[RMDB]
RNA sequence: GGGAACGACUCGAGUAGAGUCGAAAAAGCAGUCCAUACGUGGACUGCAAGAGCUCAUCCAUAAUUGUCAUGAUCUGAGACAGUGACAACUAUGGAUGAGCUCUCAACGUACCAUACGUGGUACGAAAACUAAGAGAGACUUCGGUCUCUCUUAGUUAAAAGAAACAACAACAACAAC
Reactivity to DMS in 0.01 (KOAc 150mM, MgCl2 10mM, bicine 150mM(pH8.5), 24C), signal-to-noise 8, nucleotides 027 to 126: a070g000c000a000g000u000c000c000a030u000a090c220g030u010g010g010a010c000u000g010c000a020a000g010a010g010c000u000c000a000u000c000c000a010u000a000a010u000u000g000u000c000a010u000g010a160u030c130u020g000a160g010a100c130a300g010u000g000a010c010a010a000c070u000a000u000g000g000a000u000g000a000g010c000u000c000u000c040a070a200c010g010u000a000c000c000a040u020a100c190g030u000g000g000u000a000c000g000a050a060
Reactivity to 2A3 in 0.01 (KOAc 150mM, MgCl2 10mM, bicine 150mM(pH8.5), 24C), signal-to-noise 9, nucleotides 027 to 126: a000g010c000a000g000u010c010c000a010u020a060c300g100u040g000g000a000c000u000g000c000a000a000g000a000g000c000u000c000a000u000c000c000a000u000a010a020u010u010g010u000c000a010u040g100a270u080c100u230g140a100g040a190c070a070g050u010g010a000c000a000a000c000u000a000u000g000g000a000u000g000a000g000c000u000c000u000c000a000a000c000g000u000a000c000c000a010u020a060c250g090u030g000g000u010a000c000g010a090a070

An RNA of 177 nucleotides, treated with DMS and 2A3 and read out base by base. For 2A3 the reverse transcriptase was SuperScript II with manganese.